[RMDB]
RNA sequence: GGGAACGACUCGAGUAGAGUCGAAAAGUAAAAGAGGAGAAAGCGCGCACUCCUCAAGCGCGCAGAUGUACGUACCACAUCAGGUACGAACGCGCCAAGGGUGCGAGGCGCGAACCCACCCAAAAAAGUAACAGAGUAUCUUCGGAUACUCUGUUACAAAAGAAACAACAACAACAAC
Reactivity to 2A3 in 0.01 (KOAc 150mM, MgCl2 10mM, bicine 150mM(pH8.5), 24C), signal-to-noise 2, nucleotides 027 to 126: g070u100a010a020a100a080g110a110g010g020a040g040a050a160a010g020c000g000c000g020c010a020c030u140c020c020u010c010a000a020g030c050g000c000g000c030a010g070a120u170g050u120a040c020g000u000a000c020c020a090c030a300u240c080a040g000g010u000a000c010g000a020a000c010g000c000g000c000c000a050a020g020g000g030u030g030c030g030a070g000g070c020g020c010g040a010a000c020c010c000a050c030c030c010a070a130a000a030a010a000
Reactivity to DMS in 0.01 (KOAc 150mM, MgCl2 10mM, bicine 150mM(pH8.5), 24C), signal-to-noise 2, nucleotides 027 to 126: g050u000a110a060a080a040g030a110g010g000a110g010a090a170a250g000c050g010c000g000c020a050c010u020c010c010u000c110a070a170g000c020g030c020g000c070a080g000a020u000g030u020a090c000g000u010a010c000c000a110c270a070u000c300a070g010g020u000a000c000g020a070a070c020g000c000g000c010c050a140a100g000g010g020u010g010c000g010a100g010g000c030g020c030g000a100a100c020c010c020a130c010c010c020a000a120a110a110a060a090